RNA sequence: GGGAACGACUCGAGUAGAGUCGAAAACUGGUUCUCUUCGAAAUGCAUUUAGGUGCAGCGUCACGUGCUGAUGCGCGGGGGUAGAGCACUGACAAGGCUAGGGGGCACACCCGCUUACCAAACCUUAUCGUGAAAUAGAUUUCGAUCUAUUUCACGAAAAAGAAACAACAACAACAAC
Reactivity to 2A3 in 0.01 (KOAc 150mM, MgCl2 10mM, bicine 150mM(pH8.5), 24C), signal-to-noise 9, nucleotides 027 to 126: c020u040g020g020u050u010c020u000c000u050u070c070g080a100a110a100u100g020c030a040u050u080u160a150g020g020u030g000c010a030g020c030g190u040c030a080c100g030u040g000c010u100g050a110u170g020c020g000c020g020g010g000g000g000u050a030g010a010g080c010a010c040u020g030a040c040a080a020g070g000c010u050a030g010g010g020g010g000c020a020c010a020c050c020c000g010c030u020u070a110c030c010a070a050a020c010c000u040u050a080
Reactivity to DMS in 0.01 (KOAc 150mM, MgCl2 10mM, bicine 150mM(pH8.5), 24C), signal-to-noise 6, nucleotides 027 to 126: c060u000g010g010u000u000c010u000c020u020u020c060g000a070a110a070u010g010c030a020u000u000u010a100g020g010u010g020c030a060g020c080g000u000c030a060c150g010u010g020c020u000g010a090u020g010c070g020c030g010g000g010g000g010u000a050g010a070g000c020a040c020u000g010a080c120a100a110g010g010c050u000a160g010g000g000g000g000c040a080c100a110c060c030c030g000c050u010u020a080c070c050a050a090a140c120c030u000u000a160

The record gives the reactivity of an RNA of 177 nucleotides to 2A3 and DMS. 2A3 adducts were read by reverse transcription with SuperScript II with manganese. The reactions ran in a buffer of 150 mM KOAc, 10 mM MgCl2 and 150 mM bicine (pH 8.5), at 24 C.